[RMDB]
RNA sequence: GGGAACGACUCGAGUAGAGUCGAAAAGUCAUGCCUUUUGGCAUGACAGGUAGCUUUUGCUACCGAAGAGUCUACCGCCCAUCCCAUCGGUAGACUCGAGACAUAUAUAUAUUAAUGCCGACCUUAAUAUAUAUAUGGAACGGUCGGGAGGAUGGGAACCAUACGUACUGUUCGCAGUACGUAUGGUAAAAGAAACAACAACAACAAC
Reactivity to 2A3 in 0.01 (KOAc 150mM, MgCl2 10mM, bicine 150mM(pH8.5), 24C), signal-to-noise 5, nucleotides 027 to 156: g000u000c000a000u000g010c010c000u150u300u260u300g000g000c000a000u000g000a000c000a000g000g010u010a000g000c010u110u120u210u300g000c000u000a000c000c000g020a100a040g000a000g010u000c010u020a010c010c000g030c020c010c000a030u010c000c020c000a080u050c010g000g010u010a000g000a000c000u000c010g030a080g030a000c000a000u030a000u000a000u000a000u020a010u010u150a110a020u110g120c020c020g050a070c000c020u040u110a080a000u010a000u000a000u000a000u000a020u020g030g020a050a050c050g000g050u100c010g010g030g030a010g020g010a040u040g010g000g000a000
Reactivity to DMS in 0.01 (KOAc 150mM, MgCl2 10mM, bicine 150mM(pH8.5), 24C), signal-to-noise 1, nucleotides 027 to 156: g040u000c000a000u000g010c000c010u000u000u000u000g020g090c030a000u000g010a030c010a030g000g010u000a000g000c000u000u000u000u000g020c000u000a030c000c000g020a050a060g010a060g000u000c000u000a010c020c000g010c090c030c030a130u010c020c000c000a190u030c030g040g000u000a020g000a020c000u000c000g000a160g000a230c010a010u000a010u000a000u000a010u010a030u000u000a050a020u010g010c040c140g020a160c100c100u000u000a010a020u000a010u000a020u010a010u000a000u000g000g000a170a140c200g000g090u000c020g010g020g020a120g010g000a060u000g000g020g010a150